[RMDB]
An RNA of 177 nucleotides, treated with 2A3 and DMS and read out base by base. 2A3 is a SHAPE reagent: it acylates the 2'-hydroxyl of flexible nucleotides of all four kinds. For 2A3 the reverse transcriptase was SuperScript II with manganese. The RNA was probed in 150 mM KOAc, 10 mM MgCl2 and 150 mM bicine (pH 8.5) at 24 C. DMS adducts were read by reverse transcription with MarathonRT. Source: RMDB library TTRDEL, as collected in RNAgym.
RNA sequence: GGGAACGACUCGAGUAGAGUCGAAAAGAUAUGGAAGAAGGGAGCUGACAAACUAUUCGGAAACGAACGAAUUUGAGAACAGCGACGAUCUUCUUCCUAAGUCAAAAGUUGAGCUUCGGCUCAACAAGAAUCCAUUUGAGUUCGCUCAAAUGGAUUCAAAAGAAACAACAACAACAAC
Reactivity to 2A3 in 0.01 (KOAc 150mM, MgCl2 10mM, bicine 150mM(pH8.5), 24C), signal-to-noise 3, nucleotides 027 to 126: g000a010u070a030u120g010g000a000a010g000a000a000g030g010g030a020g010c000u040g050a100c070a030a170a050c040u040a040u010u050c000g040g080a150a270a200c120g100a070a010c010g060a100a260u190u120u120g180a200g040a240a020c010a010g010c040g130a100c000g000a020u000c000u010u000c000u000u000c000c000u000a060a010g020u010c020a000a010a100a240g010u010u000g010a000g010c010u040u080c300g120g000c000u020c010a000a000c000a000a000
Reactivity to DMS in 0.01 (KOAc 150mM, MgCl2 10mM, bicine 150mM(pH8.5), 24C), signal-to-noise 3, nucleotides 027 to 126: g010a020u010a300u010g000g010a010a000g010a020a000g000g000g000a010g050c000u000g020a120c040a040a070a040c100u020a210u000u000c000g010g010a090a120a180c200g020a020a060c040g020a060a060u010u000u000g000a150g000a100a070c010a000g010c010g000a040c270g000a010u000c000u000u000c000u000u010c000c000u010a000a100g000u000c030a060a090a120a120g010u000u000g000a010g010c010u000u010c200g030g000c000u000c000a000a000c010a080a090